The record gives the reactivity of an RNA of 177 nucleotides to DMS and 2A3. Reactivities are given for positions 27 through 126. It was measured as part of the RMDB library M2PK90. For 2A3 the reverse transcriptase was SuperScript II with manganese.
[RMDB]
RNA sequence: GGGAACGACUCGAGUAGAGUCGAAAAUGAUUGAGCGUAGCACACACUCAGACUGUACGACAGUCUGACACACACCUACGCUAGUGCAUCGUGUGUGUGAUAUCGAUGUAGCACGAUAAUGAAGUAACAGAACUUCCUCAUUCGUGAGGAAGUUCUGAAAAGAAACAACAACAACAAC
Reactivity to DMS in 0.01 (KOAc 150mM, MgCl2 10mM, bicine 150mM(pH8.5), 24C), signal-to-noise 3, nucleotides 027 to 126: u000g010a120u010u000g010a160g010c030g000u000a010g010c050a080c050a050c040a120c150u010c000a010g000a020c010u000g000u000a070c300g030a150c010a000g010u000c010u000g010a000c060a100c050a020c100a110c220c030u000a000c020g010c030u000a060g000u000g000c130a080u000c020g000u020g020u000g000u010g000u010g000a150u010a090u010c060g000a070u010g020u000a120g000c030a030c020g000a060u000a020a040u000g010a110a120g020u020a070a140
Reactivity to 2A3 in 0.01 (KOAc 150mM, MgCl2 10mM, bicine 150mM(pH8.5), 24C), signal-to-noise 2, nucleotides 027 to 126: u270g020a040u120u190g030a010g010c030g010u040a000g000c100a020c000a000c000a000c070u030c010a000g000a010c010u020g000u150a120c180g110a010c220a000g010u000c000u000g010a000c000a010c000a000c000a020c010c000u030a010c010g050c050u000a040g100u000g080c010a010u000c020g000u020g020u030g000u020g020u050g090a060u000a040u150c070g030a050u060g010u050a040g050c040a020c030g000a020u030a040a150u240g100a080a020g090u070a050a010